[RMDB]
Source: RMDB library OK3TST, as collected in RNAgym. An RNA of 207 nucleotides, treated with 2A3 and DMS and read out base by base. The RNA was probed in 150 mM KOAc, 10 mM MgCl2 and 150 mM bicine (pH 8.5) at 24 C. 2A3 adducts were read by reverse transcription with SuperScript II with manganese. The DMS profile rests on 2,151 reads. Values cover nucleotides 27 to 156.
RNA sequence: GGGAACGACUCGAGUAGAGUCGAAAAUAGAAUCGGGGAAGGUCCCCGAAUGGGAAAUGAAUCAUGAAAACCACGAAGACCUCCAGCAAGCAGACAUGCCUGGGUUCCAGUGAGCUGCCCAUUCUGCUGCCCUCCGAGUUCACAGGUGAGGGAGAGAUCAUCCCUAUCAUUUCGAUGAUAGGGAUGAAAAAGAAACAACAACAACAAC
Reactivity to 2A3 in 0.01 (KOAc 150mM, MgCl2 10mM, bicine 150mM(pH8.5), 24C), signal-to-noise 2, nucleotides 027 to 156: u140a010g120a060a030u040c040g000g000g000g000a020a160g090g070u110c000c000c020c050g010a000a010u060g020g030g030a030a120a100u130g080a080a070u170c050a040u110g050a020a040a020a090c040c050a040c040g050a050a050g030a030c000c020u030c010c060a010g020c070a090a030g020c010a010g060a150c090a080u080g020c010c060u020g000g000g010u040u000c010c010a050g010u010g050a010g000c050u050g000c020c000c040a020u040u020c030u070g070c020u110g030c000c000c010u000c000c010g020a050g080u170u180c120a130c060a090g120g060u100g050a020g030g010g000a040g020a000g010a020
Reactivity to DMS in 0.01 (KOAc 150mM, MgCl2 10mM, bicine 150mM(pH8.5), 24C), signal-to-noise 1, nucleotides 027 to 156: u010a170g010a150a090u000c000g050g010g020g050a060a150g050g000u000c010c030c030c000g030a010a020u000g000g020g000a080a010a090u020g010a120a020u000c030a100u020g000a100a090a120a140c020c000a090c040g000a180a070g000a080c040c000u000c020c020a090g030c090a080a140g000c040a080g000a000c080a300u020g020c020c020u000g020g030g020u000u000c040c030a040g020u000g000a060g010c060u010g020c040c000c030a070u000u000c010u000g050c090u010g010c000c000c020u000c020c010g000a130g020u000u000c090a100c080a110g030g040u000g000a070g030g000g020a100g000a050g000a200